About this RNA: The data come from the RNA Mapping Database (RMDB), library RFMREP. This 177-nucleotide RNA was probed chemically with 2A3 and DMS. For 2A3 the reverse transcriptase was SuperScript II with manganese. DMS adducts were read by reverse transcription with MarathonRT. Conditions: 150 mM KOAc, 10 mM MgCl2 and 150 mM bicine (pH 8.5), 24 C.
RNA sequence: GGGAACGACUCGAGUAGAGUCGAAAAUGGGUUUGCCGUAGCCCUGCCCAUUCCUGUAGAACUUGCCAGAUCAGCACUGAGACGGUUUGAGGCCUCCUGUUGUCCCUCCAGCAGAAGGUUAUAGAACGACUGUUAAAGACUUCGGUCUUUAACAGUCAAAAGAAACAACAACAACAAC
Reactivity to 2A3 in 0.01 (KOAc 150mM, MgCl2 10mM, bicine 150mM(pH8.5), 24C), signal-to-noise 1, nucleotides 027 to 126: u090g000g000g000u020u050u100g010c010c040g060u080a030g010c010c010c000u010g010c020c020c000a040u080u050c020c010u090g040u150a050g070a150a050c040u030u150g040c000c000a010g000a210u140c060a040g120c080a010c100u040g000a000g030a060c050g090g000u000u000u070g070a050g020g020c000c010u010c000c000u000g000u020u030g050u110c000c000c000u030c000c000a010g010c000a010g000a020a010g060g000u020u070a170u080a090g050a040a020c010
Reactivity to DMS in 0.01 (KOAc 150mM, MgCl2 10mM, bicine 150mM(pH8.5), 24C), signal-to-noise 2, nucleotides 027 to 126: u010g010g020g020u000u010u000g030c030c060g030u010a150g000c040c010c000u000g020c020c010c010a160u000u010c030c010u000g030u000a070g010a060a070c100u000u010g020c040c020a060g000a100u010c030a080g000c070a080c110u010g000a130g010a060c070g010g000u000u000u010g020a170g010g000c020c020u000c030c010u010g020u000u000g010u000c020c020c010u010c300c020a020g010c030a010g000a040a030g010g010u010u030a090u010a160g010a090a090c140